[RMDB]
RNA sequence: GGGAACGACUCGAGUAGAGUCGAAAAAGCAUGCUUCGAAGAAAAGUGUAAAAUCACGAUAAACUCUCUCGAAGUCGAAUAAAUAAAUAAAAGACGAUAAAGCUUCGAGCAUGCGAAGAGAGAGGAAGGGUACUUAGUAGUUCGCUACUAAGUACCCAAAAGAAACAACAACAACAAC
Reactivity to DMS in 0.01 (KOAc 150mM, MgCl2 10mM, bicine 150mM(pH8.5), 24C), signal-to-noise 2, nucleotides 027 to 126: a130g000c020a010u000g010c000u070u040c000g070a020a010g000a050a090a170a180g040u000g000u020a050a080a010a080u070c000a060c090g040a100u010a050a120a100c010u000c010u010c020u000c000g000a120a150g020u040c050g010a180a040u010a010a100a130u030a130a070a030u000a120a100a110a100g020a090c030g030a070u020a130a170a100g010c000u000u000c000g010a000g010c000a000u000g010c010g040a110a000g010a010g000a020g000a030g010g000a100a070
Reactivity to 2A3 in 0.01 (KOAc 150mM, MgCl2 10mM, bicine 150mM(pH8.5), 24C), signal-to-noise 2, nucleotides 027 to 126: a010g010c000a000u010g000c000u060u110c020g000a000a020g020a020a190a030a000g040u050g010u080a010a070a050a110u160c040a000c020g020a000u120a010a120a020c000u010c000u000c000u000c020g010a050a000g100u040c010g110a010a010u090a010a060a000u110a030a040a010u110a030a070a000a010g070a050c040g020a060u220a120a280a020g110c000u000u000c000g000a000g000c000a000u020g000c000g000a040a020g010a000g020a000g000a000g010g020a020a140
Conditions: 150 mM KOAc, 10 mM MgCl2 and 150 mM bicine (pH 8.5), 24 C. Chemical mapping of a 177-nucleotide RNA with DMS and 2A3. The DMS profile rests on 2,662 reads. For 2A3, 2,463 sequencing reads were counted. DMS adducts were read by reverse transcription with MarathonRT.